[RMDB]
RNA sequence: GGGAACGACUCGAGUAGAGUCGAAAACUUUCGGGAAUACCCGGUCCAUUGUCUUCAAUAUCGACUCGUACAGCAGAGCGGUUGAGUACUCCAUUAAUGGUGACUAGACGUUGAAUACGGGUGCGUAUGACGCUCCGUAUUUCGAUACGGAGCGUCAAAAAGAAACAACAACAACAAC
Reactivity to 2A3 in 0.01 (KOAc 150mM, MgCl2 10mM, bicine 150mM(pH8.5), 24C), signal-to-noise 1, nucleotides 027 to 126: c030u010u150u220c030g020g040g090a100a160u090a150c020c050c030g000g010u080c000c000a000u040u170g020u000c020u060u060c070a120a020u030a010u160c010g260a270c100u000c000g040u090a170c040a080g200c030a010g030a000g080c000g010g030u000u020g030a020g010u060a280c000u020c030c010a070u000u210a240a140u080g060g010u010g030a030c030u070a020g020a020c030g020u040u010g000a070a040u140a190c030g000g020g000u040g040c040g040u080a100
Reactivity to DMS in 0.01 (KOAc 150mM, MgCl2 10mM, bicine 150mM(pH8.5), 24C), signal-to-noise 2, nucleotides 027 to 126: c100u000u000u010c060g020g050g020a180a140u000a060c000c010c000g020g030u000c040c030a030u000u010g030u000c040u000u000c140a100a100u010a070u010c010g010a050c000u000c010g000u010a130c200a090g010c210a150g000a050g000c060g000g010u000u000g000a140g030u000a090c080u000c000c020a070u000u000a100a160u010g000g000u000g000a100c040u000a080g010a080c010g000u010u000g000a070a000u010a070c040g000g010g020u000g010c080g020u010a130
An RNA of 177 nucleotides, treated with 2A3 and DMS and read out base by base. DMS adducts were read by reverse transcription with MarathonRT. 2A3 adducts were read by reverse transcription with SuperScript II with manganese. Source: RMDB library OK2TST, as collected in RNAgym. For DMS, 1,213 sequencing reads were counted.